[RMDB]
RNA sequence: GGGAACGACUCGAGUAGAGUCGAAAACAAAGCAGUAUGGGAAGAACAUCUUAAAACAAAUAGAGAAUAGCAUAAUUAGAGAACUAUCUUCUCUAACUCUAGAGAGAUUGUCAACCUUGAAGGCAACAUACAAUGUGUAAUUCGUUACACAUUGUAUAAAAGAAACAACAACAACAAC
Reactivity to DMS in 0.01 (KOAc 150mM, MgCl2 10mM, bicine 150mM(pH8.5), 24C), signal-to-noise 9, nucleotides 027 to 126: c060a070a140a090g010c030a030g020u000a120u000g010g010g000a050a210g000a060a070c030a030u010c040u010u010a060a070a100a120c140a070a090a110u000a030g000a040g010a140a100u000a100g010c090a070u010a080a200u000u000a040g010a040g010a030a030c150u000a080u010c190u000u000c000u000c000u010a010a070c100u010c060u000a020g020a130g010a030g010a030u000u010g020u000c020a040a200c050c010u000u010g010a090a140g000g000c030a060a060c170
Reactivity to 2A3 in 0.01 (KOAc 150mM, MgCl2 10mM, bicine 150mM(pH8.5), 24C), signal-to-noise 9, nucleotides 027 to 126: c020a010a090a020g020c020a000g060u080a020u070g020g020g020a050a030g020a070a050c010a030u020c010u050u110a130a140a050a060c070a040a130a070u080a020g030a010g040a140a110u100a110g060c020a050u090a200a080u190u040a020g010a000g010a040a010c050u090a150u180c050u060u010c000u000c000u000a040a040c010u010c010u060a010g010a000g000a000g000a070u040u120g010u020c010a030a040c020c020u020u050g030a050a020g070g000c020a030a010c010